An RNA of 177 nucleotides, treated with 2A3 and DMS and read out base by base. For DMS the reverse transcriptase was MarathonRT. 2A3 adducts were read by reverse transcription with SuperScript II with manganese. The data come from the RNA Mapping Database (RMDB), library OK1LIB. Conditions: 150 mM KOAc, 10 mM MgCl2 and 150 mM bicine (pH 8.5), 24 C.
RNA sequence: GGGAACGACUCGAGUAGAGUCGAAAAUUAAUUGUCCUCAAAAAGGGAGAGAAUUUCUUGUGAAUGCUUUCGACAAUUUCGAAUUUAUCUAUACCAUAAUCCGAUCAUUUUAUAAGGGAUGGUAUAAAUCCGUACCCUUUUUCGAAAGGGUACGGAUAAAAGAAACAACAACAACAAC
Reactivity to 2A3 in 0.01 (KOAc 150mM, MgCl2 10mM, bicine 150mM(pH8.5), 24C), signal-to-noise 3, nucleotides 027 to 126: u100u070a010a030u120u080g010u040c010c000u150c020a030a070a090a050a100g110g060g000a030g020a000g060a080a280u030u030u050c030u070u100g080u080g060a100a090u180g050c060u010u070u080c060g010a050c020a200a280u000u050u100c080g120a100a030u020u040u030a200u100c050u000a020u010a010c000c000a010u030a230a110u120c010c010g040a030u040c050a070u090u160u080u170a230u050a080a000g050g000g000a000u000g020g010u010a000u010a020a030
Reactivity to DMS in 0.01 (KOAc 150mM, MgCl2 10mM, bicine 150mM(pH8.5), 24C), signal-to-noise 2, nucleotides 027 to 126: u030u070a080a120u000u030g030u000c030c030u010c100a040a030a070a130a150g000g000g010a050g010a090g020a140a110u000u000u000c070u000u020g010u020g000a000a030u000g000c030u000u000u000c050g000a110c150a070a090u000u010u040c030g000a050a040u020u010u030a100u020c130u000a060u000a000c000c000a020u000a070a160u010c010c000g020a080u020c230a110u000u040u020u030a070u000a080a080g000g000g010a000u000g000g000u000a010u000a000a050